Conditions: 150 mM KOAc, 10 mM MgCl2 and 150 mM bicine (pH 8.5), 24 C. This 170-nucleotide RNA was probed chemically with DMS and 2A3. 2A3 adducts were read by reverse transcription with SuperScript II with manganese.
RNA sequence: GGGAACGACUCGAGUAGAGUCGAAAACUUCUUCUUGGCCUUCCGGAGAUCCUUCUCGAGAUCAUCCACUAACUUUCUUGCAUUGACCCACUGCUCGAGGACUCCUUCUCUUCCCGCUCGGGAUUUCGUCGAGCGCCCUUCGGGGCGCUCAAAAGAAACAACAACAACAAC
Reactivity to DMS in 0.01 (KOAc 150mM, MgCl2 10mM, bicine 150mM(pH8.5), 24C), signal-to-noise 3, nucleotides 027 to 129: c170u000u000c040u040u020c010u060u030g020g040c050c020u050u000c070c010g040g010a100g000a170u040c040c030u050u000c030u010c030g050a030g000a020u000c090a090u000c050c030a120c230u030a120a220c060u010u020u000c040u000u070g020c200a070u060u060g010a120c020c050c040a170c090u000g040c090u040c020g080a030g010g020a170c020u000c050c020u010u060c030u000c000u010u010c040c010c040g070c100u000c080g030g020g010a150u030u020u000c060g000u000c080
Reactivity to 2A3 in 0.01 (KOAc 150mM, MgCl2 10mM, bicine 150mM(pH8.5), 24C), signal-to-noise 3, nucleotides 027 to 129: c030u020u000c030u040u050c000u050u040g010g040c010c000u050u000c050c010g000g000a010g010a070u010c010c000u060u090c070u030c040g070a040g010a110u030c040a100u000c030c000a060c050u060a060a050c010u030u120u110c010u040u140g050c000a050u000u070g050a080c000c000c000a030c000u010g020c000u020c000g010a030g010g060a070c020u000c020c000u010u030c030u040c000u090u040c050c020c060g020c040u080c010g060g010g000a080u050u070u050c060g040u000c080